The record gives the reactivity of an RNA of 177 nucleotides to DMS and 2A3.
The RNA was probed in 150 mM KOAc, 10 mM MgCl2 and 150 mM bicine (pH 8.5) at 24 C.
It was measured as part of the RMDB library OK1LIB.
RNA sequence: GGGAACGACUCGAGUAGAGUCGAAAACACUGCAGGGGAGACUGGAAAUCCUGGUGUAGCGGUGGAAUGCGCAGAUGUCGGGAGGAACACCGGUGGCGAAGGCGGGUCUCUGGGCAGUGACUGGCGCGAUUAUAUUAUAAUUCGUUAUAAUAUAAUCAAAAGAAACAACAACAACAAC
Reactivity to DMS in 0.01 (KOAc 150mM, MgCl2 10mM, bicine 150mM(pH8.5), 24C), signal-to-noise 5, nucleotides 027 to 126: c030a040c030u020g010c020a080g010g010g010g010a040g000a070c040u010g000g010a070a130a100u030c020c010u010g000g020u030g020u010a080g000c050g000g000u010g010g010a100a080u040g010c060g030c040a080g010a080u010g020u020c020g000g000g000a070g000g010a140a100c070a140c040c010g010g030u010g010g000c080g010a100a080g000g020c110g010g010g000u000c030u000c010u010g010g000g000c020a030g010u010g010a090c070u010g010g020c070g010c100
Reactivity to 2A3 in 0.01 (KOAc 150mM, MgCl2 10mM, bicine 150mM(pH8.5), 24C), signal-to-noise 7, nucleotides 027 to 126: c020a000c000u030g000c020a020g040g100g030g010a030g010a020c030u060g030g100a050a020a040u050c010c010u030g010g030u110g030u040a040g050c020g020g050u070g040g090a040a070u190g030c030g000c030a020g030a190u110g050u160c000g020g020g020a070g020g060a070a020c040a020c030c000g040g050u060g030g020c060g040a030a010g080g010c070g010g020g010u000c000u000c010u020g050g040g000c000a000g010u010g040a020c040u050g030g090c030g000c020